[RMDB]
RNA sequence: GGGAACGACUCGAGUAGAGUCGAAAAGAUAUGGAACGAAUGCUGGAACUACAGCAAACACUCGGAAACGAGUGUUUGCUGCCAGCACUAUUCCUAAGUCUAAAAGUGACUUGUUCGCAAGUCACAACUUUCCUUCGUAGUUCGCUACGAAGGAAAGAAAAGAAACAACAACAACAAC
Reactivity to DMS in 0.01 (KOAc 150mM, MgCl2 10mM, bicine 150mM(pH8.5), 24C), signal-to-noise 3, nucleotides 027 to 126: g030a030u010a300u010g000g000a010a000c090g000a040a090u000g010c000u000g000g000a080a020c080u010a300c010a000g000c000a000a000a000c000a000c000u000c000g000g000a120a080a170c010g010a020g010u000g010u000u000u000g000c000u000g000c000c010a000g010c000a000c040u000a170u000u000c000c000u010a060a170g000u010c010u000a060a090a120a120g030u000g010a010c000u000u000g020u000u000c170g020c010a020a010g000u000c000a000c000a090a050
Reactivity to 2A3 in 0.01 (KOAc 150mM, MgCl2 10mM, bicine 150mM(pH8.5), 24C), signal-to-noise 3, nucleotides 027 to 126: g010a020u060a040u180g000g000a060a000c090g080a300a250u040g010c020u020g010g030a090a050c150u260a120c300a030g000c040a010a000a020c010a000c000u010c000g040g050a060a060a030c020g010a000g000u010g010u000u000u010g010c000u000g000c000c010a010g000c000a000c000u000a020u010u010c000c000u020a170a050g040u020c020u070a080a110a070a100g010u000g000a000c010u010u010g020u090u170c300g030c120a020a000g000u000c000a000c000a010a000